Structure probing data (2A3 and DMS) for a 177-nucleotide construct.
Values cover nucleotides 27 to 126.

RNA sequence: GGGAACGACUCGAGUAGAGUCGAAAAGAUAUGGAUCAUGAACUACAACGAAUACUCGGAAACGAGUAUUUGUACACACCGCCGUUGCAUGAGUCCUAAGUCAAAGGUGGGGCUUCGGCCCCACCAAGUAAACAGCUAGGUUCGCCUAGCUGUUUACAAAAGAAACAACAACAACAAC
Reactivity to 2A3 in 0.01 (KOAc 150mM, MgCl2 10mM, bicine 150mM(pH8.5), 24C), signal-to-noise 2, nucleotides 027 to 126: g030a010u030a010u050g000g020a000u020c010a000u030g040a060a070c050u180a140c240a180a010c040g010a010a000u010a010c000u000c000g010g030a010a000a000c000g010a000g000u000a000u000u000u010g000u050a010c070a010c020a010c000c140g190c110c060g040u030u080g110c020a000u000g010a030g270u150c010c000u000a010a000g000u000c040a100a010a140g000g000u010g000g000g010g000c040u090u110c300g120g000c000c050c010c000a000c000c000a000a000
Reactivity to DMS in 0.01 (KOAc 150mM, MgCl2 10mM, bicine 150mM(pH8.5), 24C), signal-to-noise 3, nucleotides 027 to 126: g000a010u000a020u020g000g000a190u000c010a010u010g010a070a060c050u010a230c100a050a030c010g000a010a010u000a000c000u000c000g020g000a010a020a040c000g010a010g000u000a000u000u000u000g030u000a090c150a120c150a130c220c090g000c130c060g010u000u000g010c000a010u000g000a030g000u000c000c000u000a010a130g000u000c020a110a070a100g000g010u000g000g000g010g020c020u000u010c240g020g010c000c010c000c000a000c000c000a010a070

Annotation
The RNA was probed in 150 mM KOAc, 10 mM MgCl2 and 150 mM bicine (pH 8.5) at 24 C. DMS adducts were read by reverse transcription with MarathonRT.